[RMDB]
RNA sequence: GGGAACGACUCGAGUAGAGUCGAAAACGUCCACGGCUGACGGUUGAUUCCUCCUCCUGACUGAGUGCACAAGGCCCGCUUGGUUGAUUCGGAUACCUAUUCGAAGCCACCGGGGCCUUGUUGGCACCGGUAAGCCCAUUUUCGAAUGGGCUUACCGAAAAGAAACAACAACAACAAC
Reactivity to 2A3 in 0.01 (KOAc 150mM, MgCl2 10mM, bicine 150mM(pH8.5), 24C), signal-to-noise 9, nucleotides 027 to 126: c020g040u030c010c030a130c090g100g010c130u070g010a020c020g050g050u060u110g070a120u060u050c000c000u010c000c010u040c010c010u060g080a160c030u050g050a040g030u010g000c010a000c010a000a000g000g010c010c010c000g200c120u120u130g010g000u020u040g020a120u020u000c000g000g030a020u180a300c040c060u130a070u030u010c000g000a010a000g020c030c010a010c010c010g010g000g010g000c000c000u000u000g000u010u000g010g010c000a010c010
Reactivity to DMS in 0.01 (KOAc 150mM, MgCl2 10mM, bicine 150mM(pH8.5), 24C), signal-to-noise 8, nucleotides 027 to 126: c070g010u000c010c060a190c160g010g010c100u020g010a040c050g010g020u010u020g010a250u010u000c010c000u000c010c000u000c020c010u000g010a110c140u010g000a110g020u000g010c020a060c020a000a020g000g000c000c010c000g010c120u020u020g010g020u010u010g010a190u000u000c000g000g000a000u000a110c280c250u040a040u000u000c000g000a020a020g010c030c060a020c040c020g000g000g000g000c000c000u010u000g000u010u010g010g010c020a010c020